RNA sequence: GGGAACGACUCGAGUAGAGUCGAAAAGACACAAGUGAGAAUUGGAUGUUAUGACCGUCCAGAAAAGACAAGAUGAGAAAGUGCAGUAUUGACUGUCUUCAAACGCACCUGUCCUUGCUCAAGUGCUAGAUGAGGAUACGUUCGCGUAUCCUCAUCUAAAAGAAACAACAACAACAAC
Reactivity to 2A3 in 0.01 (KOAc 150mM, MgCl2 10mM, bicine 150mM(pH8.5), 24C), signal-to-noise 4, nucleotides 027 to 126: g020a000c000a000c000a040a030g080u010g070a070g010a030a200u150u030g040g000a040u000g030u140u120a180u220g130a070c030c000g000u000c000c000a000g100a060a060a030a000g020a010c060a040a030g090a140u140g010a050g100a160a100a000g070u170g070c020a010g040u100a190u180u280g140a050c010u020g010u010c000u010u010c030a050a080a060c020g000c020a020c020c010u010g040u000c020c020u020u030g000c000u000c070a110a050g020u010g030c000u000
Reactivity to DMS in 0.01 (KOAc 150mM, MgCl2 10mM, bicine 150mM(pH8.5), 24C), signal-to-noise 2, nucleotides 027 to 126: g000a110c070a010c050a060a030g000u010g000a040g050a180a070u030u020g040g010a020u000g010u030u080a250u060g000a160c270c010g030u010c030c000a040g000a100a010a100a130g000a110c040a050a050g000a060u000g020a100g000a060a050a060g030u040g060c020a040g000u000a180u000u000g020a020c090u000g020u050c110u010u010c060a050a050a070c180g000c010a000c010c000u000g010u000c010c080u000u020g000c010u020c040a020a050g000u010g000c030u030